[RMDB]
The record gives the reactivity of an RNA of 177 nucleotides to 2A3 and DMS. It was measured as part of the RMDB library OK2TST. 2A3 adducts were read by reverse transcription with SuperScript II with manganese. The reactions ran in a buffer of 150 mM KOAc, 10 mM MgCl2 and 150 mM bicine (pH 8.5), at 24 C.
RNA sequence: GGGAACGACUCGAGUAGAGUCGAAAAGAAGGGGUCGGUCAAGAGCAACCAGACCAUCCAGAUCCAGGCCGGUGAGUUGUUCGGUGGGGACAAGGCGGAGGGUGGCAUCGCCGGGCCGCUAGACGUCAGGUAUAAUAUGAUUCGUCAUAUUAUACCUAAAAGAAACAACAACAACAAC
Reactivity to 2A3 in 0.01 (KOAc 150mM, MgCl2 10mM, bicine 150mM(pH8.5), 24C), signal-to-noise 5, nucleotides 027 to 126: g050a050a020g050g010g000g020u030c030g010g030u060c080a080a050g040a020g110c020a010a030c010c020a050g040a030c010c000a020u030c000c020a030g010a100u030c030c030a020g070g000c020c020g020g020u050g040a130g010u040u080g020u100u080c030g020g030u070g020g030g000g000a020c040a080a050g030g010c020g000g030a040g020g030g020u050g030g020c020a070u090c020g010c010c030g020g050g010c010c000g010c030u050a050g030a100c030g070u090c060
Reactivity to DMS in 0.01 (KOAc 150mM, MgCl2 10mM, bicine 150mM(pH8.5), 24C), signal-to-noise 9, nucleotides 027 to 126: g020a170a120g010g000g000g010u010c040g010g010u010c070a110a110g000a100g020c090a090a050c050c030a160g010a050c030c020a060u000c040c040a100g000a120u000c050c060a110g010g020c040c030g010g010u010g000a090g010u000u000g000u010u000c050g010g020u000g010g000g000g000a090c110a060a100g010g010c070g010g010a110g010g010g020u000g000g010c070a050u010c050g010c030c030g000g000g010c010c020g010c060u000a060g000a150c130g010u010c120